[RMDB]
RNA sequence: GGGAACGACUCGAGUAGAGUCGAAAAGAUAUGGAGAUUUCAUGGGAGAACGUCGGAAACGAUAGUUCGACGAUCAUGGAUCUCCUAAGUCAAAAGACGUAUGAACGCUUCGGCGUUCAUACGUCAAGCCUUAAAUAUUGUUCGCAAUAUUUAAGGCAAAAGAAACAACAACAACAAC
Reactivity to 2A3 in 0.01 (KOAc 150mM, MgCl2 10mM, bicine 150mM(pH8.5), 24C), signal-to-noise 3, nucleotides 027 to 126: g020a000u050a060u140g050g010a000g010a020u080u300u300c020a000u010g010g010g010a040g020a010a010c000g000u010c020g010g030a060a060a060c030g020a020u100a300g030u010u000c010g020a050c020g010a020u030c010a000u020g010g010a000u010c000u020c010c000u020a110a030g040u000c010a000a000a030a230g010a000c010g020u010a010u030g020a000a010c000g010c030u070u130c300g070g010c000g000u010u000c000a000u010a000c000g000u010c010a010a000
Reactivity to DMS in 0.01 (KOAc 150mM, MgCl2 10mM, bicine 150mM(pH8.5), 24C), signal-to-noise 5, nucleotides 027 to 126: g000a040u010a300u010g010g000a020g000a010u010u000u010c010a010u000g000g000g010a050g010a010a010c000g010u010c000g010g000a100a120a160c010g010a020u000a090g040u000u000c000g000a090c190g010a050u020c010a000u000g000g010a000u000c000u000c000c000u000a010a070g010u000c040a100a070a100a100g000a010c000g010u000a010u000g000a000a010c000g010c000u000u010c230g030g010c000g000u000u000c000a000u000a000c000g010u010c000a010a060

Chemical mapping of a 177-nucleotide RNA with 2A3 and DMS. Values cover nucleotides 27 to 126.